[RMDB]
RNA sequence: GGGAACGACUCGAGUAGAGUCGAAAAGAUAUGGAGCGAUACCAGACAUGCCUCCUCGGAAACGAGUAGGCAACAGCUGGUUCGCUCCUAAGUCAAAGUUAGCUGAAACUUCGGUUUCAGCUAACAAGGUAAGGCUGAAGUUCGCUUCAGCCUUACCAAAAGAAACAACAACAACAAC
Reactivity to DMS in 0.01 (KOAc 150mM, MgCl2 10mM, bicine 150mM(pH8.5), 24C), signal-to-noise 2, nucleotides 027 to 126: g000a020u000a260u000g000g010a000g010c000g000a040u010a000c000c000a000g010a210c130a200u000g000c000c000u010c100c010u000c000g010g000a050a080a080c010g010a020g010u010a020g000g000c010a010a030c240a160g000c000u000g000g000u000u000c000g010c000u000c020c000u000a000a040g000u010c020a150a080a090g000u000u000a000g010c000u000g000a020a000a000c000u000u000c240g020g000u000u000u000c010a000g000c000u000a000a000c010a090a060
Reactivity to 2A3 in 0.01 (KOAc 150mM, MgCl2 10mM, bicine 150mM(pH8.5), 24C), signal-to-noise 1, nucleotides 027 to 126: g020a000u000a010u090g000g000a000g000c000g000a020u140a210c000c000a000g110a180c120a100u020g000c020c000u010c000c010u000c010g050g000a010a020a010c010g000a000g000u000a000g030g040c000a000a010c020a000g100c000u000g010g000u000u000c000g010c000u010c030c000u000a000a000g000u020c020a020a090a000g000u000u000a000g020c010u000g030a010a010a000c020u060u110c300g090g000u000u000u020c010a000g000c010u010a000a000c000a000a000